[RMDB]
RNA sequence: GGGAACGACUCGAGUAGAGUCGAAAAUCGGUGAGCGAGGGCUGUUCGACUCCACGCGGAAAUGUCGAAGGAUGAUGUCCACCACGCCGUGCUGUCACGUUCUCGGUACCCUCGAUUUCCGUCUCUUCGAAGGGGAACUUUUCGAAGUUCCCCUUCGAAAAGAAACAACAACAACAAC
Reactivity to 2A3 in 0.01 (KOAc 150mM, MgCl2 10mM, bicine 150mM(pH8.5), 24C), signal-to-noise 2, nucleotides 027 to 126: u060c010g010g000u070g010a040g040c040g020a080g020g040g020c040u080g060u110u050c000g040a020c010u000c000c010a020c010g060c000g010g030a050a080a090u300g000u070c040g070a070a030g060g000a050u100g030a100u090g080u000c020c030a050c000c000a030c090g080c130c030g070u030g000c050u010g000u040c020a010c030g000u020u030c090u010c000g010g000u070a100c030c000c000u000c000g050a100u000u000u050c000c000g020u000c020u050c000u070u010

Chemical mapping of a 177-nucleotide RNA with 2A3. 2A3 adducts were read by reverse transcription with SuperScript II with manganese. Conditions: 150 mM KOAc, 10 mM MgCl2 and 150 mM bicine (pH 8.5), 24 C.